RNA sequence: GGGAACGACUCGAGUAGAGUCGAAAACCCUGGUUAUUCGUAACCAGGGGUUGAGUGAAUCCUCUCAGUGCAUCGGUGGAUCACAGGAAACGCAUGGACGACAAUUACGGUUAUUCGUAACCGUAAAAUAGAAGGAACUUUUCGAAGUUCCUUCUAUAAAAGAAACAACAACAACAAC
Reactivity to 2A3 in 0.01 (KOAc 150mM, MgCl2 10mM, bicine 150mM(pH8.5), 24C), signal-to-noise 3, nucleotides 027 to 126: c000c000c010u000g000g000u020u000a050u070u080c210g000u020a020a010c000c000a000g010g000g020g000u050u240g060a060g020u070g050a060a070u000c000c000u000c040u030c060a070g050u060g150c040a120u080c100g080g010u040g060g030a020u050c010a020c020a030g110g100a100a120a020c070g020c060a090u160g040g090a050c030g010a030c050a060a060u040u020a000c000g020g000u020u000a010u010u080c170g020u020a000a000c000c000g000u010a020a010a000
Reactivity to DMS in 0.01 (KOAc 150mM, MgCl2 10mM, bicine 150mM(pH8.5), 24C), signal-to-noise 6, nucleotides 027 to 126: c010c000c000u000g000g010u000u000a010u000u010c180g010u000a000a000c000c000a010g010g010g000g020u000u010g010a120g010u010g010a080a120u000c020c010u000c050u010c070a100g020u010g000c110a060u000c070g000g020u000g000g010a060u000c030a030c040a100g000g000a060a060a090c100g010c070a060u000g000g000a060c050g020a060c130a070a170u000u000a010c010g000g000u000u000a030u000u020c190g000u000a010a000c000c000g000u000a000a020a060
The record gives the reactivity of an RNA of 177 nucleotides to 2A3 and DMS. The RNA was probed in 150 mM KOAc, 10 mM MgCl2 and 150 mM bicine (pH 8.5) at 24 C. The 2A3 profile rests on 3,038 reads. High 2A3 reactivity points to a flexible backbone, as in loops and unpaired stretches.